[RMDB]
RNA sequence: GGGAACGACUCGAGUAGAGUCGAAAAGACGAUCUCUUGUCUCUCCUGAAGGAGGAAGGAGCUCUCGAACGCUCUCCCGACCGCUCGGAUGGGCCGCUUCCGGCAAGAGGGGCCGAAAGUGUGAAGGUAACGUUGCCGUUCGCGGCAACGAAAAGAAACAACAACAACAAC
Reactivity to DMS in 0.01 (KOAc 150mM, MgCl2 10mM, bicine 150mM(pH8.5), 24C), signal-to-noise 6, nucleotides 027 to 129: g000a070c000g030a060u040c050u010c030u020u030g040u000c040u050c030u000c010c030u050g030a150a090g010g010a010g000g050a090a040g020g020a070g020c050u010c020u010c060g020a060a150c120g050c070u020c080u000c080c020c000g020a160c070c000g000c000u010c070g000g030a040u050g020g000g050c090c030g000c050u000u020c050c030g030g040c000a130a070g000a080g020g010g010g010c030c050g030a050a070a000g010u060g010u080g030a070a140g040g060u050a040a100
Reactivity to 2A3 in 0.01 (KOAc 150mM, MgCl2 10mM, bicine 150mM(pH8.5), 24C), signal-to-noise 5, nucleotides 027 to 129: g020a010c040g030a120u070c000u010c000u010u070g120u030c010u020c010u030c060c020u140g130a110a050g030g020a000g000g000a020a030g020g000a010g010c010u010c000u020c020g020a080a020c030g000c030u020c000u020c010c000c000g100a140c030c020g030c040u040c030g060g040a080u060g080g030g010c000c000g030c000u010u020c040c000g000g000c000a020a030g060a020g100g030g060g020c010c000g020a050a030a030g050u090g040u120g110a060a010g030g000u060a070a010

Chemical mapping of a 170-nucleotide RNA with DMS and 2A3. Source: RMDB library 15KLIB, as collected in RNAgym. Values are in units of 0.01, from 0 to 300, in steps of 10.